[RMDB]
RNA sequence: GGGAACGACUCGAGUAGAGUCGAAAAGACUCUUACAAAGGGAUAGUUGUAGGAGAUUGCAUCUCGAACUAUCCAUCUGCACGAUUCGAGAUGCAUGGUUGCCAAAUCGUGCAGUUAUUGGCAACAGCGAUCAGUGACUAUUCGUAGUCACUGAUCGAAAAGAAACAACAACAACAAC
Reactivity to DMS in 0.01 (KOAc 150mM, MgCl2 10mM, bicine 150mM(pH8.5), 24C), signal-to-noise 4, nucleotides 027 to 126: g000a170c000u000c000u000u000a000c010a010a050a170g010g000g000a070u000a030g020u000u010g020u010a030g000g000a020g000a110u000u000g020c050a280u000c000u000c010g010a040a120c240u010a050u010c030c040a040u000c010u000g000c010a010c030g000a060u000u000c050g010a030g010a060u000g010c090a030u010g010g010u000u000g010c000c010a080a040a040u000c010g000u000g000c000a020g000u000u000a090u000u000g020g000c050a010a010c030a140g000
Reactivity to 2A3 in 0.01 (KOAc 150mM, MgCl2 10mM, bicine 150mM(pH8.5), 24C), signal-to-noise 3, nucleotides 027 to 126: g020a010c000u000c010u010u040a010c020a000a020a030g210g040g070a080u070a070g080u020u020g060u050a020g000g080a040g000a060u050u110g020c000a050u000c000u010c010g030a080a050c040u060a100u060c000c020a040u020c000u020g000c010a010c030g080a040u070u040c050g040a030g030a090u070g030c020a030u070g110g000u020u010g000c000c000a000a050a030u040c030g010u020g030c000a010g010u010u070a100u060u060g030g000c000a010a020c010a050g080